Source: RMDB library TTRINS, as collected in RNAgym. The record gives the reactivity of an RNA of 177 nucleotides to DMS. Values cover nucleotides 27 to 126.
[RMDB]
RNA sequence: GGGAACGACUCGAGUAGAGUCGAAAAGAUAUGGAUGCUCAACAGCUGAUGAGCACUAUGAAGUAAAAUUGAGCUCGGAAACGAGCUCAAUUUUAUGGAGUGCCAUCAGACAUGAGCAUCCUAAGUCCAAUUCCCAAGUCUUCGGACUUGGGAAUUGAAAAGAAACAACAACAACAAC
Reactivity to DMS in 0.01 (KOAc 150mM, MgCl2 10mM, bicine 150mM(pH8.5), 24C), signal-to-noise 1, nucleotides 027 to 126: g020a090u010a300u010g000g010a000u000g040c000u000c000a030a080c300a230g020c000u020g000a030u030g020a290g030c000a030c010u020a250u010g010a170a300g000u030a000a000a030a000u000u010g010a000g020c000u010c000g010g030a090a180a210c010g000a010g000c010u000c000a000a000u000u000u000u000a000u010g000g000a020g030u000g000c000c000a020u000c000a020g030a030c050a200u000g000a000g010c000a010u000c000c000u000a000a110g010u000c000